[RMDB]
RNA sequence: GGGAACGACUCGAGUAGAGUCGAAAACUUUACAGCCACCUACACUGAUGGUAGUACUGCCGUUAUUUCUUUUAAUGAUUGCGGUAUUAUUCGGGAUGGUGCAUCUGAAUCUCUUGUGUGGGAAUUCGUGGAGUAUUCUGUUCGCAGAAUACUCCACAAAAGAAACAACAACAACAAC
Reactivity to DMS in 0.01 (KOAc 150mM, MgCl2 10mM, bicine 150mM(pH8.5), 24C), signal-to-noise 2, nucleotides 027 to 126: c070u000u000u010a080c070a090g020c280c020a080c010c010u010a090c210a080c020u000g040a090u000g000g040u000a010g010u000a010c010u000g000c010c030g020u000u000a010u000u000u010c300u030u010u000u000a020a040u000g000a030u000u000g000c000g010g030u000a010u000u010a020u010u010c070g030g000g000a140u000g010g030u010g010c130a120u000c070u000g000a110a030u000c000u000c000u000u050g010u010g020u010g030g010g020a100a110u010u000c140
Reactivity to 2A3 in 0.01 (KOAc 150mM, MgCl2 10mM, bicine 150mM(pH8.5), 24C), signal-to-noise 1, nucleotides 027 to 126: c000u070u120u120a030c050a000g000c020c030a030c010c010u030a070c060a040c030u090g040a130u090g050g060u000a010g020u000a000c010u000g000c000c010g020u010u010a040u010u080u130c170u110u200u030u100a060a050u010g010a000u000u040g030c000g000g000u000a020u030u000a020u040u110c030g020g010g020a010u010g030g060u120g080c010a020u060c050u080g080a100a060u000c020u010c000u200u100g090u050g020u080g040g030g060a100a070u130u110c050
An RNA of 177 nucleotides, treated with DMS and 2A3 and read out base by base. For DMS the reverse transcriptase was MarathonRT. For DMS, 1,288 sequencing reads were counted. It was measured as part of the RMDB library OK2TST. For 2A3, 1,125 sequencing reads were counted. Conditions: 150 mM KOAc, 10 mM MgCl2 and 150 mM bicine (pH 8.5), 24 C.